[RMDB]
RNA sequence: GGGAACGACUCGAGUAGAGUCGAAAAAUAAUGCUUGUAGUCCUUGUUUACCGUACGGUGCAUACUUUAAAAAUAGCGUCAUGAUCACUAAAACCAAGACUAAUGUGCCUACACCUAACAGAAUAUCAUCACAGGUUGAGUUCGCUCAACCUGUGAUAAAAGAAACAACAACAACAAC
Reactivity to 2A3 in 0.01 (KOAc 150mM, MgCl2 10mM, bicine 150mM(pH8.5), 24C), signal-to-noise 1, nucleotides 027 to 126: a000u070a050a050u050g000c020u070u070g000u080a020g040u030c010c000u000u060g080u050u130u040a120c000c110g060u060a050c080g020g000u040g020c000a020u060a110c020u090u210u300a110a090a000a050a000u120a010g080c070g050u110c020a060u110g020a000u020c000a000c120u120a060a080a000a050c040c000a080a040g100a040c010u030a070a040u000g000u030g020c010c000u030a020c040a030c050c010u050a060a030c040a040g190a100a030u230a040u180c110
Reactivity to DMS in 0.01 (KOAc 150mM, MgCl2 10mM, bicine 150mM(pH8.5), 24C), signal-to-noise 1, nucleotides 027 to 126: a040u000a060a160u050g000c030u000u000g010u010a160g010u000c020c060u000u010g010u000u000u000a060c090c040g000u020a060c060g040g020u010g010c050a090u010a030c050u010u000u020a020a090a050a080a090u000a050g000c070g000u000c070a070u020g000a020u000c040a030c060u000a030a090a030a030c110c080a090a070g020a020c080u000a100a050u020g000u000g050c030c000u000a030c060a060c060c080u020a020a010c040a090g000a070a070u000a020u000c100
Conditions: 150 mM KOAc, 10 mM MgCl2 and 150 mM bicine (pH 8.5), 24 C. Chemical mapping of a 177-nucleotide RNA with 2A3 and DMS. Reactivities are given for positions 27 through 126.